[RMDB]
RNA sequence: GGGAACGACUCGAGUAGAGUCGAAAAUGAGACAGGGUCUCACUCUGUCAUCCAGGGUGGAGUGUAGUGGCAUGAUCAUGGCUCACUGUAGCCUCAACCUUGGGGGCUCAAUUGAUCCUCCUGCCUCGUGGCGAAAAUCAUUCGUGAUUUUCGCCACAAAAGAAACAACAACAACAAC
Reactivity to DMS in 0.01 (KOAc 150mM, MgCl2 10mM, bicine 150mM(pH8.5), 24C), signal-to-noise 1, nucleotides 027 to 126: u000g040a200g000a020c030a040g000g040g000u000c140u000c130a140c150u000c000u000g010u000c040a080u130c000c040a000g000g020g050u060g000g060a000g000u030g000u000a000g050u000g000g060c020a070u000g000a220u160c300a110u030g020g050c010u070c000a100c150u120g020u070a070g000c170c060u070c020a030a110c090c000u000u000g000g000g000g000g000c000u000c070a080a110u030u020g000a000u000c000c040u010c000c040u000g000c050c060u000c070
Reactivity to 2A3 in 0.01 (KOAc 150mM, MgCl2 10mM, bicine 150mM(pH8.5), 24C), signal-to-noise 3, nucleotides 027 to 126: u250g000a020g010a030c020a010g030g000g000u000c060u000c110a040c000u070c010u000g050u050c030a120u010c000c000a010g030g030g010u040g020g030a020g040u040g000u140a020g040u010g000g030c030a030u080g090a180u290c100a150u230g070g000c050u120c150a010c000u040g110u100a020g020c020c000u040c000a050a100c010c000u040u060g030g000g000g000g010c050u020c010a160a300u060u070g030a020u060c010c030u020c000c010u010g030c000c030u100c090
Background
This 177-nucleotide RNA was probed chemically with DMS and 2A3. The reactions ran in a buffer of 150 mM KOAc, 10 mM MgCl2 and 150 mM bicine (pH 8.5), at 24 C. It was measured as part of the RMDB library OK1LIB. Reactivities are given for positions 27 through 126.